[RMDB]
RNA sequence: GGGAACGACUCGAGUAGAGUCGAAAAGUUUUAUGCGCGUGAGCGGUAUCGCGGAACAGGAAAGGGACAUCAAGCAAGUUCAUCACUGGUGAUAACCCGGCAAAGUUAUUCGAGCCGGACAUUUCCAAACAAAGAACUAGUUCGCUAGUUCUUUGUUAAAAGAAACAACAACAACAAC
Reactivity to DMS in 0.01 (KOAc 150mM, MgCl2 10mM, bicine 150mM(pH8.5), 24C), signal-to-noise 7, nucleotides 027 to 126: g020u010u000u010u000a050u010g020c070g030c030g030u010g010a110g020c040g020g010u000a040u010c060g010c060g000g010a070a070c060a080g000g010a040a090a100g000g010g010a050c070a050u010c080a070a090g010c090a060a080g010u000u000c060a050u000c070a080c130u000g000g020u000g010a060u010a080a150c170c010c010g010g020c040a040a100a130g010u000u010a100u000u010c060g010a300g010c000c010g010g000a040c140a030u000u000u000c010c010a080
Reactivity to 2A3 in 0.01 (KOAc 150mM, MgCl2 10mM, bicine 150mM(pH8.5), 24C), signal-to-noise 3, nucleotides 027 to 126: g000u030u030u030u160a100u120g050c040g010c010g020u060g040a050g020c040g000g060u060a050u080c020g000c020g050g010a020a030c020a030g020g100a070a040a030g050g000g000a010c010a040u030c010a020a040g040c030a060a050g030u030u050c020a040u060c020a040c070u050g000g000u010g000a020u030a070a020c010c000c010g000g000c020a100a110a040g030u090u050a130u280u230c030g010a010g000c010c010g020g000a000c010a010u040u060u030c030c000a030